[RMDB]
Chemical mapping of a 207-nucleotide RNA with 2A3 and DMS. The data come from the RNA Mapping Database (RMDB), library RNAMAK. The reactions ran in a buffer of 150 mM KOAc, 10 mM MgCl2 and 150 mM bicine (pH 8.5), at 24 C.
RNA sequence: GGGAACGACUCGAGUAGAGUCGAAAAGGGGUCGAGUCGUAGUAGCGAUACUAGGGACUUGGAUUUACAGUCCUGAAGCCUCCACGGGACUGUUGUCAGUCCCAUAUCGCGAAACGACUCGACGGAGGCACCCAAAACCGGAGCUUCGGCUCCGGAACACUAUAAGGUUGUUCGCAACCUUAUAGUGAAAAGAAACAACAACAACAAC
Reactivity to 2A3 in 0.01 (KOAc 150mM, MgCl2 10mM, bicine 150mM(pH8.5), 24C), signal-to-noise 4, nucleotides 027 to 156: g170g010g010g020u030c010g000a000g020u000c010g000u020a020g040u010a010g000c010g000a030u080a100c230u300a300g000g000g010a030c110u210u260g100g000a050u220u230u140a010c000a000g000u010c000c000u010g020a100a030g020c010c020u000c010c010a010c010g000g000g000a000c020u010g000u010u020g010u010c070a070g000u010c010c000c000a010u010a000u020c000g000c000g010a000a000a000c000g000a000c000u000c000g000a000c010g000g000a000g000g010c010a040c000c000c000a030a100a020a050c010c000g010g000a000g010c000u080u100c300g110g000c000u010c000c010g000g000a000a010
Reactivity to DMS in 0.01 (KOAc 150mM, MgCl2 10mM, bicine 150mM(pH8.5), 24C), signal-to-noise 1, nucleotides 027 to 156: g000g030g050g000u000c000g010a030g020u010c000g000u010a080g030u000a240g000c030g000a040u000a030c210u000a200g070g030g040a040c040u000u000g060g010a100u000u000u010a060c020a040g000u010c000c000u040g010a050a120g000c010c000u020c010c020a300c120g010g020g000a040c000u000g030u000u000g020u010c030a120g000u040c000c020c010a070u000a000u000c000g050c000g010a080a200a130c000g000a010c000u000c020g020a010c000g020g000a040g020g020c030a260c000c080c010a110a040a130a170c000c000g000g010a060g020c010u000u000c300g020g030c000u000c000c000g000g030a030a070